Description: Structure probing data (2A3) for a 177-nucleotide construct. Reactivities are given for positions 27 through 126.

RNA sequence: GGGAACGACUCGAGUAGAGUCGAAAAGGGAAUGGAAAUACUUUUGGUUCACCUCAAGCCUAAUGCGACAGUAUUUUCGGAUUUUCGCAUUGCCAAAUGCCAAUCUGCAUUCCACAGCCAGCCUCGAAUGCCCGUCAGGCUUCGGCCUGACGGGCAUAAAAGAAACAACAACAACAAC
Reactivity to 2A3 in 0.01 (KOAc 150mM, MgCl2 10mM, bicine 150mM(pH8.5), 24C), signal-to-noise 1, nucleotides 027 to 126: g080g000g000a030a030u020g040g070a090a040a040u090a200c030u140u170u000u070g080g000u010u220c070a110c000c090u070c100a100a000g000c010c010u160a120a000u090g000c000g170a060c120a090g030u010a020u030u140u030u060c150g070g050a110u000u020u090u110c090g010c000a000u000u000g130c000c100a030a020a030u110g000c000c000a000a020u010c000u000g000c000a030u070u000c060c000a100c000a030g070c030c000a080g050c000c000u080c000g130a050
The reactions ran in a buffer of 150 mM KOAc, 10 mM MgCl2 and 150 mM bicine (pH 8.5), at 24 C. Values are in units of 0.01, from 0 to 300, in steps of 10.